[RMDB]
RNA sequence: GGGAACGACUCGAGUAGAGUCGAAAAUAAAACACGUAACGUGAGCUCAGUCGGUAGUGCAGCAGGACCGAAACCUGCAGCGAAAGGGAUCAAGACCCUGUUCGCGCAAAAACCGAAGAAAAAAAAAUCACUACUGUAGGUUCGCCUACAGUAGUGAAAAAGAAACAACAACAACAAC
Reactivity to DMS in 0.01 (KOAc 150mM, MgCl2 10mM, bicine 150mM(pH8.5), 24C), signal-to-noise 2, nucleotides 027 to 126: u040a070a050a090a140c000a000c010g000u000a130a080c140g020u000g010a210g000c020u000c020a160g000u000c020g020g000u010a030g010u000g020c020a110g020c030a000g000g050a070c120c180g020a130a090a070c040c000u000g020c010a300g020c000g010a010a030a000g000g010g030a140u010c260a040a110g010a080c000c020c000u000g010u000u020c010g010c000g000c100a050a010a060a080a010c030c000g020a040a080g000a020a010a000a000a000a080a070a200a140
Reactivity to 2A3 in 0.01 (KOAc 150mM, MgCl2 10mM, bicine 150mM(pH8.5), 24C), signal-to-noise 1, nucleotides 027 to 126: u040a000a030a010a020c060a020c030g120u210a280a000c120g010u070g030a020g060c040u020c070a040g040u000c010g000g020u050a070g130u050g100c010a010g000c000a000g000g050a130c040c190g030a100a030a020c000c000u000g040c030a010g000c010g010a030a000a000g040g000g020a070u190c070a110a030g070a180c020c010c010u050g160u050u000c000g000c000g020c000a000a000a000a100a050c030c060g010a040a060g030a040a100a040a000a000a000a000a000a020

This 177-nucleotide RNA was probed chemically with DMS and 2A3. The RNA was probed in 150 mM KOAc, 10 mM MgCl2 and 150 mM bicine (pH 8.5) at 24 C. For 2A3, 1,176 sequencing reads were counted. Values are in units of 0.01, from 0 to 300, in steps of 10. It was measured as part of the RMDB library M2PK90.